[RMDB]
RNA sequence: GGGAACGACUCGAGUAGAGUCGAAAAAGUAAGAUAUGGAGGCACGACGACGGCAUGGGAGGAGUCGUGGUCGGAAACGACCACGUACUCCGAAGAACAUGCCAUCAGUGCCUCCUAAGUCAGAGAACAAUUGUGAGCACUUCGGUGCUCACAAUUGAAAAGAAACAACAACAACAAC
Reactivity to DMS in 0.01 (KOAc 150mM, MgCl2 10mM, bicine 150mM(pH8.5), 24C), signal-to-noise 2, nucleotides 027 to 126: a170g030u020a110a010g030a040u000a300u000g000g010a040g000g000c000a010c000g000a140c300g040a060c080g010g020c000a000u000g030g000g020a110g040g000a000g000u010c000g040u010g010g000u000c000g000g000a060a060a260c000g000a010c000c000a010c010g050u000a000c000u000c000c030g000a000a070g010a180a200c020a030u000g010c000c000a030u020c100a120g000u000g000c000c020u000c000c000u000a010a070g020u000c030a080g000a180g020a150a180

Source: RMDB library TTRDES, as collected in RNAgym. An RNA of 177 nucleotides, treated with DMS and read out base by base. Values cover nucleotides 27 to 126. The RNA was probed in 150 mM KOAc, 10 mM MgCl2 and 150 mM bicine (pH 8.5) at 24 C.